[RMDB]
RNA sequence: GGGAACGACUCGAGUAGAGUCGAAAAAGCAGGUCUACGGACCGGCAAAACGUUCAUCUCGUUUUACGGGCCGCAUUAAGAUUGAAGCCAAGGAACGGGGACUUCAGACUACGACUACGGUCGUAGAUUACGCCUCCGAGUUUCGACUCGGAGGCAACUAGCACAUAUUGUUCGCAAUAUGUGCUAGAAAAGAAACAACAACAACAAC
Reactivity to 2A3 in 0.01 (KOAc 150mM, MgCl2 10mM, bicine 150mM(pH8.5), 24C), signal-to-noise 4, nucleotides 027 to 156: a000g050c020a020g000g030u000c020u040a020c110g050g000a010c010c010g020g010c000a030a040a010a010c020g060u120u090c100a170u060c080u030c020g000u010u020u020u080a020c020g010g020g000c020c030g010c050a060u170u140a090a050g050a100u040u100g060a060a020g000c020c010a050a060g110g010a100a010c060g010g040g020g040a050c010u090u060c100a060g020a120c010u010a000c010g000a000c000u040a020c190g090g000u000c000g000u000a000g010a010u030u090a030c090g000c000c000u000c010c000g010a000g000u060u130u150c160g100a020c010u000c000g000g000a000g000g000c000a000a000
Reactivity to DMS in 0.01 (KOAc 150mM, MgCl2 10mM, bicine 150mM(pH8.5), 24C), signal-to-noise 2, nucleotides 027 to 156: a090g010c060a080g020g000u010c010u000a050c060g000g010a030c050c000g000g010c160a020a010a030a030c080g000u000u020c190a110u010c170u000c000g010u010u000u010u000a040c000g000g000g020c000c000g000c030a090u000u000a110a160g020a210u010u000g000a010a040g000c030c000a040a080g000g000a080a170c080g010g010g010g000a080c040u000u000c060a100g010a230c000u000a020c000g010a020c010u000a090c280g060g040u000c000g000u010a000g010a110u000u000a100c080g010c010c010u000c000c020g010a030g020u000u000u000c190g000a040c000u000c000g000g020a010g000g010c010a000a010